[RMDB]
RNA sequence: GGGAACGACUCGAGUAGAGUCGAAAAACCAGCUUCGGCUGGUCACCAUCCUAAGUCACGGGCGAAGAGACGCAUCGAUCUGGAGUCUCGGAAACGAGACGAUGAAAGGGAGCGUCUUGUAUGUGCGUGAUAUGGAAAUUCUCUACUUCGGUAGAAAGUAUGAGACAUAUUUCGAUAUGUCUCAUACAAAAGAAACAACAACAACAAC
Reactivity to 2A3 in 0.01 (KOAc 150mM, MgCl2 10mM, bicine 150mM(pH8.5), 24C), signal-to-noise 9, nucleotides 027 to 156: a020c010c000a010g000c010u060u110c250g180g000c000u010g000g000u010c010a040c020c010a070u040c000c010u070a130a060g010u000c000a000c010g040g090g000c020g050a130a040g010a030g000a020c000g000c020a170u240c020g090a050u020c010u020g070g100a060g010u000c000u000c000g010g010a030a040a020c000g000a000g010a020c010g030a110u030g030a010a020a020g050g020g010a110g000c000g000u000c000u000u050g030u030a070u170g020u120g140c000g000u010g000a000u000a030u050g000g080a020a080a090u300u040c050u000c000u050a020c010u040u090c230g100g000u030a010g020a030a030a030
Reactivity to DMS in 0.01 (KOAc 150mM, MgCl2 10mM, bicine 150mM(pH8.5), 24C), signal-to-noise 3, nucleotides 027 to 156: a050c000c000a030g020c000u000u000c300g040g000c000u010g000g000u000c010a050c070c040a150u010c010c020u000a060a280g010u000c020a040c020g010g000g020c010g030a190a300g020a020g020a010c010g020c010a170u010c070g010a220u000c040u000g010g000a280g010u000c000u000c000g000g000a130a090a230c000g010a020g000a020c000g010a140u010g000a080a100a210g010g000g000a090g060c010g000u000c010u030u000g010u000a120u010g060u000g020c010g050u000g010a050u000a280u020g000g000a010a050a130u000u010c050u010c000u010a010c000u000u010c250g020g010u000a040g000a050a120a190